About this RNA: Structure probing data (2A3 and DMS) for a 177-nucleotide construct. Reactivities are given for positions 27 through 126. For 2A3, 2,030 sequencing reads were counted. DMS adducts were read by reverse transcription with MarathonRT.
RNA sequence: GGGAACGACUCGAGUAGAGUCGAAAAGAAAGCCCAGGCUUAGAAUGGAUAUUGGGAGAAGGAGCCACCCCUGGAAUAUCAGAAAAAUCCUAUUUGGUCAUCCACAACCUCUGAUCUCCUAAGCUAAGAACCUGUGAAAGUUCGCUUUCACAGGUUCAAAAGAAACAACAACAACAAC
Reactivity to 2A3 in 0.01 (KOAc 150mM, MgCl2 10mM, bicine 150mM(pH8.5), 24C), signal-to-noise 4, nucleotides 027 to 126: g050a040a080a030g050c000c010c010a000g000g020c000u040u020a030g030a210a150u270g090g000a040u030a050u100u040g030g050g000a110g020a070a100g030g010a010g000c000c000a020c020c020c010c020u000g000g030a050a050u160a060u140c100a100g120a090a100a020a020a000u050c020c030u040a130u090u090u080g020g000u030c040a040u010c030c000a020c060a070a060c010c000u060c040u070g060a040u010c020u030c020c000u020a000a030g000c000u020a090a050
Reactivity to DMS in 0.01 (KOAc 150mM, MgCl2 10mM, bicine 150mM(pH8.5), 24C), signal-to-noise 2, nucleotides 027 to 126: g020a120a150a090g000c020c000c000a060g000g050c020u000u000a090g000a110a180u040g000g000a000u020a090u010u010g000g030g060a230g000a100a160g000g000a270g000c000c010a020c050c000c040c040u000g000g000a030a210u060a040u000c300a210g000a000a050a030a070a090u000c030c000u020a080u000u020u000g000g000u000c150a170u000c010c020a120c110a020a170c020c000u000c050u000g010a110u000c000u000c030c000u000a010a000g000c030u020a100a110